Chemical mapping of a 177-nucleotide RNA with 2A3 and DMS. The 2A3 profile rests on 1,006 reads.
RNA sequence: GGGAACGACUCGAGUAGAGUCGAAAAAUUUUGUGGUCGAGUCCGGGGCGAGAGCAUCUAUAAUGAAUUUUGCGUGAUAGCGGAUUCGUUUUGCAUCACAUCUGCAUCGAAGUUGAUAGCCUCGACAUAGGACGAUACUAUUCGUAGUAUCGUCCUAAAAAGAAACAACAACAACAAC
Reactivity to 2A3 in 0.01 (KOAc 150mM, MgCl2 10mM, bicine 150mM(pH8.5), 24C), signal-to-noise 2, nucleotides 027 to 126: a000u170u200u060u080g060u070g100g070u050c060g040a040g040u020c130c090g020g000g030g030c020g000a070g020a020g030c010a010u050c000u090a070u020a180a030u070g010a030a040u060u000u070u300g030c050g010u070g060a110u160a060g010c010g010g000a010u020u010c030g000u050u030u000u090g040c020a030u090c030a050c020a140u030c030u080g000c000a080u030c050g020a060a000g010u070u140g060a140u040a050g040c050c000u020c000g000a000c020a020
Reactivity to DMS in 0.01 (KOAc 150mM, MgCl2 10mM, bicine 150mM(pH8.5), 24C), signal-to-noise 3, nucleotides 027 to 126: a130u020u010u010u010g030u010g010g010u000c030g000a110g000u000c090c050g020g010g010g020c030g000a120g010a080g010c030a020u000c120u010a070u020a090a020u000g010a040a020u000u000u000u010g030c010g000u020g010a140u020a210g020c030g000g020a020u000u000c040g020u000u010u000u000g010c030a060u000c110a060c140a090u020c190u010g000c080a020u000c040g000a080a100g020u010u010g020a090u000a230g000c010c010u000c000g020a050c120a140
Values cover nucleotides 27 to 126. The data come from the RNA Mapping Database (RMDB), library OK2TST.